[RMDB]
RNA sequence: GGGAACGACUCGAGUAGAGUCGAAAACGAUGGCGUGAAACAGCGGGUUCCAGUCGAACAUGGCCAGCAUGUAACCCGGCAAGGUAUUGGCAACGAACAUCUUGCCCGAGGCGAUCAUGUUGGCGCGAGAUGAGCAGACUUUCGAGUCUGCUCAUCUAAAAGAAACAACAACAACAAC
Reactivity to 2A3 in 0.01 (KOAc 150mM, MgCl2 10mM, bicine 150mM(pH8.5), 24C), signal-to-noise 2, nucleotides 027 to 126: c020g010a030u150g010g010c100g020u060g080a110a020a020c050a070g000c070g050g000g010u080u100c010c000a020g080u060c060g050a010a010c000a030u000g070g040c000c000a030g000c000a000u000g020u130a210a290c000c000c000g000g030c000a000a000g030g020u140a080u120u160g040g000c050a060a040c040g020a040a020c060a020u060c020u000u000g090c090c000c010g000a250g010g010c010g040a040u150c000a050u000g000u000u000g000g000c000g010c000g000
Reactivity to DMS in 0.01 (KOAc 150mM, MgCl2 10mM, bicine 150mM(pH8.5), 24C), signal-to-noise 2, nucleotides 027 to 126: c100g040a010u000g020g000c000g010u000g000a110a080a090c080a080g000c060g030g020g000u000u030c030c000a130g000u000c060g000a080a050c120a110u020g000g000c000c000a000g020c000a050u000g010u000a290a210c010c000c000g000g010c040a000a000g000g010u000a090u000u000g000g010c300a070a140c070g000a060a050c080a000u020c000u000u000g000c100c000c060g000a050g010g000c050g020a130u070c000a010u000g000u000u000g000g060c010g040c100g010